[RMDB]
Source: RMDB library OK2TRN, as collected in RNAgym. Chemical mapping of a 177-nucleotide RNA with DMS and 2A3. 2A3 adducts were read by reverse transcription with SuperScript II with manganese. For DMS, 4,345 sequencing reads were counted. Reactivities are given for positions 27 through 126. DMS adducts were read by reverse transcription with MarathonRT.
RNA sequence: GGGAACGACUCGAGUAGAGUCGAAAAAAAGAAAAGUUAAGGUUGAUGGCCCAAGGACAGUAUUGUAGGCCUAUCAGUUAGCACUGUCUUGUUAUUUGUCUGUGGGACCUAAUAGAAGAAGCAGCUCCUAAAUGCUCCUUUUCGAAGGAGCAUUUAGAAAAGAAACAACAACAACAAC
Reactivity to DMS in 0.01 (KOAc 150mM, MgCl2 10mM, bicine 150mM(pH8.5), 24C), signal-to-noise 4, nucleotides 027 to 126: a040a050a060g010a080a050a070a060g020u010u000a100a070g010g020u000u000g010a080u000g010g020c010c010c040a080a090g010g000a050c090a080g010u000a080u010u010g020u000a090g010g020c040c030u000a050u000c050a050g000u000u000a070g020c110a070c050u000g010u000c040u000u000g000u000u000a050u000u000u010g010u000c020u000g010u010g010g010g020a080c060c030u010a060a070u000a080g010a060a080g010a070a070g010c040a050g010c080u010c100
Reactivity to 2A3 in 0.01 (KOAc 150mM, MgCl2 10mM, bicine 150mM(pH8.5), 24C), signal-to-noise 2, nucleotides 027 to 126: a000a050a020g150a040a050a010a040g100u090u090a100a010g060g060u060u030g070a050u090g030g000c010c000c010a020a020g030g030a030c050a080g130u210a080u150u220g130u140a060g070g000c010c000u020a090u020c010a000g040u050u070a030g020c030a000c050u010g060u060c010u100u040g080u090u100a140u120u090u070g070u040c000u000g100u120g090g010g040a070c000c010u050a110a070u110a160g090a160a000g010a020a000g060c050a010g000c000u050c010